Source: RMDB library OK2TST, as collected in RNAgym.
The record gives the reactivity of an RNA of 177 nucleotides to DMS.
Values cover nucleotides 27 to 126.
Reactivities are rounded to 0.1 and cut off at 0 and 3.
Conditions: 150 mM KOAc, 10 mM MgCl2 and 150 mM bicine (pH 8.5), 24 C.
[RMDB]
RNA sequence: GGGAACGACUCGAGUAGAGUCGAAAAUUCUAAGGCGCUUGAGAGAACUCGGGAGAAGGAACUCGGCAAAUUGGUACCGUAACUUCGGGAUAAGGUACGCCCUUGUAGUUUGACUGGCUCGCGCCAGCCGGUAAUCCUCAUUCGUGAGGAUUACCGGAAAAGAAACAACAACAACAAC
Reactivity to DMS in 0.01 (KOAc 150mM, MgCl2 10mM, bicine 150mM(pH8.5), 24C), signal-to-noise 1, nucleotides 027 to 126: u000u020c040u000a120a000g020g000c100g020c010u020u030g020a090g010a200g020a170a110c020u000c060g040g000g000a150g020a140a060g000g000a150a090c100u020c090g020g040c040a030a060a140u010u020g020g070u000a060c000c000g020u000a100a220c090u000u000c210g050g010g000a060u000a120a080g000g030u000a050c040g000c000c020c040u000u010g030u020a070g010u000u000u000g010a230c030u000g000g000c010u000c260g070c150g010c000c000a080g010